About this RNA
Structure probing data (DMS and 2A3) for a 177-nucleotide construct. For DMS the reverse transcriptase was MarathonRT. For DMS, 1,560 sequencing reads were counted. It was measured as part of the RMDB library OK2TST. The RNA was probed in 150 mM KOAc, 10 mM MgCl2 and 150 mM bicine (pH 8.5) at 24 C.

RNA sequence: GGGAACGACUCGAGUAGAGUCGAAAAACACGGUAAACGCCGGCAACGUAGCGUACGGAGGAUCUCCUCCAGACUCUGAGCACGGGAGGGUGUACGUGAGGAACGUGGCCUGGAUGCACCUCUUGGCACGUAAGGGUCAGUUCGCUGACCCUUACGUAAAAGAAACAACAACAACAAC
Reactivity to DMS in 0.01 (KOAc 150mM, MgCl2 10mM, bicine 150mM(pH8.5), 24C), signal-to-noise 3, nucleotides 027 to 126: a160c130a140c120g010g010u010a040a130a060c130g010c010c020g000g000c040a110a050c040g040u000a190g030c070g020u000a050c070g000g000a030g010g000a220u000c300u030c000c000u010c000c000a160g020a090c070u020c060u010g000a180g010c070a110c150g010g000g020a090g010g010g030u000g010u010a020c040g010u010g000a130g040g020a120a020c040g010u010g010g000c000c020u000g050g010a070u000g000c080a050c020c050u010c040u040u010g010g020c070
Reactivity to 2A3 in 0.01 (KOAc 150mM, MgCl2 10mM, bicine 150mM(pH8.5), 24C), signal-to-noise 2, nucleotides 027 to 126: a000c030a010c010g090g020u080a090a130a090c040g020c010c000g020g020c020a040a000c020g050u060a040g020c010g020u050a030c080g000g020a010g000g060a200u010c090u050c080c000u000c020c010a020g050a030c030u070c030u090g090a070g130c090a030c060g000g020g010a040g020g000g040u180g020u020a030c030g010u000g020a050g060g120a100a030c010g010u010g050g030c000c000u130g040g020a120u120g000c050a070c020c000u020c030u070u090g070g010c110